Record summary:
This 177-nucleotide RNA was probed chemically with DMS and 2A3. Reactivities are given for positions 27 through 126. The DMS profile rests on 9,384 reads.
RNA sequence: GGGAACGACUCGAGUAGAGUCGAAAAUCGUAUUCAAGAGAUUUUCGAAGCACGUAACCCUAAAGGUCAAGCGGUAAUUACGGAAAUCGAAGGUGUCGUAGAAGAUAUUAAAUUAGCAAAAGAUAGAAUGACAUCUCUUUUUCGAAAGAGAUGUCAUAAAAGAAACAACAACAACAAC
Reactivity to DMS in 0.01 (KOAc 150mM, MgCl2 10mM, bicine 150mM(pH8.5), 24C), signal-to-noise 5, nucleotides 027 to 126: u020c060g010u020a080u020u000c070a170a160g010a110g020a010u010u000u000u000c000g000a040a100g010c300a200c020g010u010a020a040c040c000c030u060a060a080a130g010g010u010c150a100a100g020c080g000g020u010a090a120u010u020a080c000g020g000a050a080a050u000c020g010a040a050g010g020u000g000u010c010g000u010a120g000a040a060g010a070u020a050u020u020a020a070a060u020u010a070g010c150a040a040a070a050g000a090u040a050g010a100
Reactivity to 2A3 in 0.01 (KOAc 150mM, MgCl2 10mM, bicine 150mM(pH8.5), 24C), signal-to-noise 6, nucleotides 027 to 126: u060c020g010u070a090u100u110c080a130a020g070a010g000a040u010u010u010u020c010g030a030a000g030c090a020c090g010u030a040a040c020c000c020u070a110a080a040g150g030u100c100a090a030g050c050g070g020u070a110a070u090u060a020c010g010g000a030a050a070u030c010g000a000a000g030g000u090g040u060c020g010u030a040g020a090a010g030a040u070a070u140u240a130a160a130u130u130a050g070c070a040a030a090a000g100a090u160a100g140a100
2A3 adducts were read by reverse transcription with SuperScript II with manganese. For DMS the reverse transcriptase was MarathonRT.